RNA sequence: GGGAACGACUCGAGUAGAGUCGAAAACGGAUGAAUCAACUGGAGACAAAAGUAGAUCGCAUUCUCUCAUCUCAGUCUCUAAUCCAGACCAUCAAGAAUGACAUAGUUGGACUUAAAGCAGGGAUGGUCCGUGAAGGACUUUCGAGUCCUUCACGGAAAAAGAAACAACAACAACAAC
Reactivity to 2A3 in 0.01 (KOAc 150mM, MgCl2 10mM, bicine 150mM(pH8.5), 24C), signal-to-noise 1, nucleotides 027 to 126: c080g030g030a050u040g050a040a150u040c020a030a020c030u060g010g040a030g030a070c060a020a200a000a000g050u120a130g010a050u070c030g000c120a040u120u000c090u050c000u020c060a070u000c020u030c030a040g030u030c000u000c030u020a000a040u000c020c000a000g050a050c000c000a030u000c000a020a150g100a120a170u090g020a040c030a080u150a030g080u000u120g050g000a000c000u050u070a120a000a000g020c080a050g040g040g010a000u010g000g130
Reactivity to DMS in 0.01 (KOAc 150mM, MgCl2 10mM, bicine 150mM(pH8.5), 24C), signal-to-noise 2, nucleotides 027 to 126: c160g010g010a070u010g010a190a120u000c030a110a070c060u000g030g030a080g000a170c120a070a060a120a100g010u010a090g020a050u000c120g010c090a080u000u000c030u000c030u000c070a110u030c030u030c060a150g010u000c010u010c020u010a080a080u010c040c040a070g000a130c020c040a060u000c020a040a050g010a090a080u000g000a050c130a140u010a060g010u010u010g020g000a060c140u000u000a010a030a060g020c070a030g000g000g000a020u000g000g020